[RMDB]
RNA sequence: GGGAACGACUCGAGUAGAGUCGAAAAUGAUGUCGAAGCAAUGGCGGAGUCCUAGGCAUCACAUCUCCGGGCGAUGUCGAAGCAAUGGCAAGAGUCCUAGGCAUCGUUCCUCUAUCCGAUGUCGAAGCUAAAUAGUCGACUUCGGUCGACUAUUUAGAAAAGAAACAACAACAACAAC
Reactivity to DMS in 0.01 (KOAc 150mM, MgCl2 10mM, bicine 150mM(pH8.5), 24C), signal-to-noise 2, nucleotides 027 to 126: u020g020a010u000g000u000c040g020a090a080g030c080a090a100u000g010g040c030g000g000a280g000u000c000c020u010a160g010g010c000a060u000c030a020c090a110u000c050u000c080c130g010g010g000c000g010a040u000g020u000c040g020a150a200g000c070a100a090u030g010g000c130a170a120g010a150g000u010c000c020u000a220g000g000c010a000u000c000g000u000u000c000c000u000c050u000a040u000c060c020g000a000u000g000u000c020g000a070a120g020
Reactivity to 2A3 in 0.01 (KOAc 150mM, MgCl2 10mM, bicine 150mM(pH8.5), 24C), signal-to-noise 2, nucleotides 027 to 126: u050g000a000u000g000u010c030g040a050a020g000c060a080a030u260g060g000c130g260g150a060g070u210c000c000u010a030g010g050c000a010u050c000a010c000a050u070c090u060c030c060g000g000g030c020g000a020u020g000u020c030g060a040a000g030c030a040a070u300g020g000c060a140a150g130a010g240u130c000c000u010a000g010g040c000a010u000c010g000u090u100c030c000u060c010u020a080u050c010c030g070a050u130g030u010c020g030a070a000g040

Background: Source: RMDB library VIROID, as collected in RNAgym. This 177-nucleotide RNA was probed chemically with DMS and 2A3. The RNA was probed in 150 mM KOAc, 10 mM MgCl2 and 150 mM bicine (pH 8.5) at 24 C. For DMS the reverse transcriptase was MarathonRT. The 2A3 profile rests on 1,885 reads.